[RMDB]
RNA sequence: GGGAACGACUCGAGUAGAGUCGAAAACAGCUGGUGCCAGAAAAGCUCAGGAGAGAGCUCAACAGGCUAGGCUUAGCACGCGAUGAUUAUGAGGAAUAUGUUAGUAGGUCAACUUCUGGGAUCCCCUUAGUGGACCAAGUUGCCAGGAAGGUCAUAACGUAGCUAAAAAUUUCGAUUUUUAGCUACGAAAAGAAACAACAACAACAAC
Reactivity to DMS in 0.01 (KOAc 150mM, MgCl2 10mM, bicine 150mM(pH8.5), 24C), signal-to-noise 3, nucleotides 027 to 156: c070a100g050c030u000g040g050u000g030c010c010a120g020a090a300a060a040g000c010u010c020a110g020g030a240g020a150g000a070g030c030u000c030a060a220c090a200g000g010c010u000a180g030g000c040u010u010a130g030c050a070c020g010c040g030a100u000g020a080u000u000a100u010g000a090g010g010a080a080u000a060u010g010u000u010a090g010u000a060g020g050u000c010a060a030c030u000u010c040u000g030g010g000a110u000c030c000c000c070u010u000a100g020u020g020g010a130c020c000a040a270g000u000u010g000c000c030a120g030g010a090a060g010g010u000c030a080u010a090a280
Reactivity to 2A3 in 0.01 (KOAc 150mM, MgCl2 10mM, bicine 150mM(pH8.5), 24C), signal-to-noise 5, nucleotides 027 to 156: c040a000g000c010u070g020g150u100g020c020c020a030g060a070a120a020a010g020c030u040c050a050g220g020a080g040a010g000a010g030c000u020c060a080a090c040a030g030g000c000u050a030g010g010c000u030u100a040g020c000a030c090g050c050g080a120u080g010a020u050u100a030u150g030a050g040g030a070a070u080a080u210g060u090u070a090g020u060a030g030g040u110c010a010a000c010u080u070c090u140g070g010g080a180u090c030c010c000c020u040u080a090g000u190g120g000a000c000c000a000a010g020u040u020g000c010c010a010g030g050a060a030g030g010u030c020a020u040a080a010
The record gives the reactivity of an RNA of 207 nucleotides to DMS and 2A3.
2A3 adducts were read by reverse transcription with SuperScript II with manganese.
The reactions ran in a buffer of 150 mM KOAc, 10 mM MgCl2 and 150 mM bicine (pH 8.5), at 24 C.
The data come from the RNA Mapping Database (RMDB), library OK3TST.
The DMS profile rests on 3,902 reads.